[RMDB]
RNA sequence: GGGAACGACUCGAGUAGAGUCGAAAAAGACAACGUGCUCAAGGGCAGACAAAUCACAGAGGAUCCAGUCCCCUACCUGCUCACAACAGGAAUAACGGACUUGCAAUCUGUCGAGCCCUCGCAUGAACGUCCUGAAGCAAUUCGUUGCUUCAGGACGAAAAGAAACAACAACAACAAC
Reactivity to DMS in 0.01 (KOAc 150mM, MgCl2 10mM, bicine 150mM(pH8.5), 24C), signal-to-noise 2, nucleotides 027 to 126: a170g000a110c090a060a220c050g000u000g050c000u000c240a040a040g000g000g120c000a170g000a070c170a090a100a150u010c110a050c080a050g040a020g020g040a120u040c180c090a010g020u000c000c000c240c190u010a130c020c000u000g000c040u000c300a090c170a070a300c000a000g010g000a090a120u000a130a100c210g000g000a030c000u000u000g000c250a180a230u010c000u000g010u000c020g010a020g000c000c000c030u000c120g000c000a030u000g020a060a220
Reactivity to 2A3 in 0.01 (KOAc 150mM, MgCl2 10mM, bicine 150mM(pH8.5), 24C), signal-to-noise 1, nucleotides 027 to 126: a000g050a020c030a090a000c070g020u010g010c020u080c140a000a020g020g000g050c000a010g070a170c100a070a090a000u090c010a000c000a020g060a020g100g030a030u100c050c020a000g030u000c000c020c000c000u050a140c010c010u010g000c000u050c030a030c010a050a020c000a010g040g000a120a020u110a060a000c020g000g000a000c000u010u000g000c010a000a030u000c000u000g000u070c110g030a040g000c010c000c000u030c000g030c000a000u000g060a070a000